[RMDB]
RNA sequence: GGGAACGACUCGAGUAGAGUCGAAAAGCGUACUACAAGCGGAUAACAAAGCCAACAGCUUUGUAUCAGGCUUCCCAAAUAGGAAGCCUUUUACAAAGACAUGGCUUUGCUAAUACGCUUGUAUCGCAAAAGGCUGUUAGCUUCGGCUAACAGCCAACCUACAGACGGCGUUCGCGCCGUCUGUAGGAAAAGAAACAACAACAACAAC
Reactivity to 2A3 in 0.01 (KOAc 150mM, MgCl2 10mM, bicine 150mM(pH8.5), 24C), signal-to-noise 1, nucleotides 027 to 156: g020c030g000u150a080c040u000a010c060a000a000g000c010g000g000a020u010a050a010c010a000a000a000g010c010c010a080a050c090a230g060c000u030u000u020g000u010a010u020c020a010g010g000c010u000u000c010c000c010a300a300a170u220a040g010g000a000a000g000c020c000u010u010u000u000a000c000a000a000a000g040a010c010a040u040g010g000c000u000u000u000g000c020u030a030a020u210a060c030g000c010u000u000g000u000a000u000c030g010c030a100a050a030a090g000g000c030u010g000u010u000a000g000c030u100u060c220g090g010c000u000a000a000c000a000g000c020c000a000a010
This 207-nucleotide RNA was probed chemically with 2A3. The reactions ran in a buffer of 150 mM KOAc, 10 mM MgCl2 and 150 mM bicine (pH 8.5), at 24 C. 2A3 adducts were read by reverse transcription with SuperScript II with manganese. Reactivities are given for positions 27 through 156.